[RMDB]
RNA sequence: GGGAACGACUCGAGUAGAGUCGAAAAAGCACCUCUUGAUUACGACGGUGGCAGGAACAUUCGAACUGCUGCACGACACAAAGAAAGGCGCUGGGAGGCACACCGGUUGCGACUUCUGCGAGAAAACAUAGUGGUGUUUUUUCGAAAACACCACUAUAAAAGAAACAACAACAACAAC
Reactivity to 2A3 in 0.01 (KOAc 150mM, MgCl2 10mM, bicine 150mM(pH8.5), 24C), signal-to-noise 1, nucleotides 027 to 126: a000g030c000a040c020c000u030c010u080u140g030a100u180u230a050c070g000a010c040g090g000u000g000g070c070a030g040g090a190a080c060a190u130u160c190g010a040a000c030u020g030c020u010g060c060a050c170g040a020c010a000c020a130a130a020g100a060a090a000g000g000c060g000c050u040g040g010g060a050g000g000c020a020c000a000c090c020g120g000u080u180g040c000g030a050c040u130u090c000u070g080c050g000a090g120a080a050a000a000c040
Reactivity to DMS in 0.01 (KOAc 150mM, MgCl2 10mM, bicine 150mM(pH8.5), 24C), signal-to-noise 2, nucleotides 027 to 126: a050g030c080a070c020c020u000c020u000u000g030a230u010u000a060c140g010a090c140g010g030u000g000g020c010a010g000g020a060a150c100a170u000u020c080g000a150a240c040u000g000c000u000g010c030a090c050g020a130c090a110c170a100a030a090g000a040a050a070g020g000c050g010c000u000g000g000g000a050g010g000c040a060c040a070c080c040g010g010u000u000g000c010g000a060c080u000u000c060u000g000c080g000a080g000a080a030a090a050c280